[RMDB]
Source: RMDB library OK3TST, as collected in RNAgym. Chemical mapping of a 207-nucleotide RNA with 2A3 and DMS.
RNA sequence: GGGAACGACUCGAGUAGAGUCGAAAAUAACGUGCUCCCCUACAGAGAGCAGACAGGUUAUGGGGGGCUGAGGCCCUAAUCCUGGCUGGCCCUUUGUGAAGAAAUAAAUGCACCCCUCAAGCUGGGGACUUCCUUGCUGGGAGCAAGGCAGGCCUGGAUCACUAAAGCGAUUCGUCGCUUUAGUGAUAAAAGAAACAACAACAACAAC
Reactivity to 2A3 in 0.01 (KOAc 150mM, MgCl2 10mM, bicine 150mM(pH8.5), 24C), signal-to-noise 2, nucleotides 027 to 156: u110a020a030c040g020u030g010c000u050c000c000c000c000u020a020c010a000g010a000g000a010g020c000a000g040a010c010a000g000g070u170u210a060u220g200g000g000g000g030g010c040u020g060a120g060g150c020c000c000u010a040a040u040c010c000u030g010g000c000u020g080g170c010c010c000u000u010u000g020u010g050a110a080g050a060a080a020u240a030a040a030u110g020c000a020c020c000c000c000u020c060a030a060g020c040u050g050g000g000g030a040c020u010u020c030c000u000u020g000c000u040g010g160g000a060g000c000a000a000g020g000c020a020g000g040c000c020u090g010g060
Reactivity to DMS in 0.01 (KOAc 150mM, MgCl2 10mM, bicine 150mM(pH8.5), 24C), signal-to-noise 1, nucleotides 027 to 156: u010a090a110c050g020u000g010c010u000c030c000c010c040u000a220c030a050g020a010g000a050g040c010a030g010a070c000a060g010g020u010u010a060u020g020g030g020g020g000g030c030u000g000a100g030g000c000c000c010u020a080a080u000c020c000u010g010g040c000u000g000g010c020c000c030u000u010u000g030u000g000a080a090g030a050a090a110u000a060a070a140u020g010c020a110c000c030c000c000u000c030a110a300g020c070u020g030g010g030g010a050c020u000u000c010c010u000u000g020c050u010g010g010g030a180g000c000a070a010g000g000c060a010g010g000c030c010u000g040g020
The RNA was probed in 150 mM KOAc, 10 mM MgCl2 and 150 mM bicine (pH 8.5) at 24 C. The DMS profile rests on 2,330 reads. For 2A3 the reverse transcriptase was SuperScript II with manganese. For DMS the reverse transcriptase was MarathonRT.